[RMDB]
RNA sequence: GGGAACGACUCGAGUAGAGUCGAAAAGAUAUGGAUCGCGACGAUCUAUAGGAAUUCAACGUUACUUUUAUAUCGGAAACGAUAUAAAAGUAACGUUGUUAUCCUGAUAGGGAGCGAUCCUAAGUCACAUGUUUAUGUACUUCGGUACAUAAACAUGAAAAGAAACAACAACAACAAC
Reactivity to DMS in 0.01 (KOAc 150mM, MgCl2 10mM, bicine 150mM(pH8.5), 24C), signal-to-noise 9, nucleotides 027 to 126: g010a050u000a300u010g000g010a000u000c000g010c010g010a110c280g010a030u010c000u000a010u000a030g010g000a030a300u010u000c000a000a000c000g000u000u000a010c000u010u000u000u000a000u000a000u000c000g010g000a080a060a140c000g000a000u000a000u000a000a000a000a010g010u000a000a000c000g010u000u000g000u000u000a080u000c000c000u000g010a040u000a010g010g000g000a050g010c010g010a010u000c000c000u000a010a050g000u000c050a290
Reactivity to 2A3 in 0.01 (KOAc 150mM, MgCl2 10mM, bicine 150mM(pH8.5), 24C), signal-to-noise 4, nucleotides 027 to 126: g040a010u080a040u190g000g000a010u000c000g000c010g180a300c010g010a150u010c010u000a010u030a020g010g010a060a240u120u020c010a000a000c010g000u000u010a000c000u000u000u010u010a000u000a000u000c000g010g010a140a080a030c000g000a000u000a000u000a010a000a000a000g000u000a000a000c010g000u000u000g000u000u010a010u010c000c000u040g150a030u010a010g010g000g000a040g020c000g000a000u010c000c000u010a120a030g040u010c010a010